[RMDB]
RNA sequence: GGGAACGACUCGAGUAGAGUCGAAAAUAGUCCAUAUCCGGCUGUUGCACCUUCCCCCUUAGCCCUGCAAACGAGGGGUGCACCGAUUGGCAUGGAAAUUUCGAUUGGAUCUCCUGCCCUCGUACCAUGCAUACCAUCGGUUCGCCGAUGGUAUGCAAAAAGAAACAACAACAACAAC
Reactivity to DMS in 0.01 (KOAc 150mM, MgCl2 10mM, bicine 150mM(pH8.5), 24C), signal-to-noise 1, nucleotides 027 to 126: u020a170g000u020c020c050a060u000a120u030c060c100g030g000c050u000g020u000u000g000c060a100c070c020u000u000c010c000c000c060c030u000u000a090g010c030c010c050u000g020c100a100a070a080c130g020a060g000g020g000g030u000g000c070a060c120c040g010a080u000u000g000g020c250a030u010g000g000a070a030a070u000u000u000c030g030a120u020u000g010g000a080u000c050u020c020c050u000g000c070c010c110u000c000g020u020a100c100c050a140
Conditions: 150 mM KOAc, 10 mM MgCl2 and 150 mM bicine (pH 8.5), 24 C.
The record gives the reactivity of an RNA of 177 nucleotides to DMS.
DMS adducts were read by reverse transcription with MarathonRT.